[RMDB]
This 207-nucleotide RNA was probed chemically with DMS and 2A3. Reactivities are given for positions 27 through 156. Conditions: 150 mM KOAc, 10 mM MgCl2 and 150 mM bicine (pH 8.5), 24 C. DMS adducts were read by reverse transcription with MarathonRT. As a SHAPE reagent, 2A3 marks flexible, mostly unpaired nucleotides at the ribose 2'-OH.
RNA sequence: GGGAACGACUCGAGUAGAGUCGAAAAGAUAGAUAGUACUCGUAAAAACUCUCUUUCGCAGGCCGCGUAUUUUGAGAGACGAAGCCGUGAAGUAGCGAAAGCUACGACGAAGCGCGUGCUCGGCCGAUGCGCGAACAGCAUCAAGUACGAGUACGAAAAAUAGUGCGAUGUUCGCAUCGCACUAUUUAAAAGAAACAACAACAACAAC
Reactivity to DMS in 0.01 (KOAc 150mM, MgCl2 10mM, bicine 150mM(pH8.5), 24C), signal-to-noise 1, nucleotides 027 to 156: g000a240u030a120g020a130u000a030g000u000a040c000u000c000g000u000a060a080a110a090a100c040u000c040u000c020u000u000u010c060g080c070a190g080g010c080c050g000c030g060u000a060u010u000u000u030g000a070g000a020g000a120c030g010a000a070g050c010c020g020u000g030a130a300g040u030a010g000c000g040a270a210a200g030c000u000a000c000g010a180c100g020a100a120g010c000g060c000g090u000g050c000u010c010g000g070c000c070g000a050u000g000c000g050c040g010a110a090c180a090g050c000a060u000c000a070a050g050u000a060c000g020a020g000u000a000c010g000a010a030
Reactivity to 2A3 in 0.01 (KOAc 150mM, MgCl2 10mM, bicine 150mM(pH8.5), 24C), signal-to-noise 2, nucleotides 027 to 156: g000a060u200a020g030a040u070a030g000u000a000c000u000c010g000u040a000a130a000a110a060c050u040c010u030c000u020u080u060c070g000c050a080g080g060c100c030g030c010g000u050a100u030u120u100u130g110a100g000a000g060a050c030g000a030a020g020c000c010g010u020g080a130a070g000u000a000g000c000g000a090a090a000g010c020u000a000c000g020a010c040g080a060a040g060c020g030c000g060u110g020c000u000c010g030g020c020c090g020a020u020g000c060g010c020g070a030a010c010a040g010c000a020u060c060a110a000g100u000a020c000g000a000g020u000a010c000g030a000a010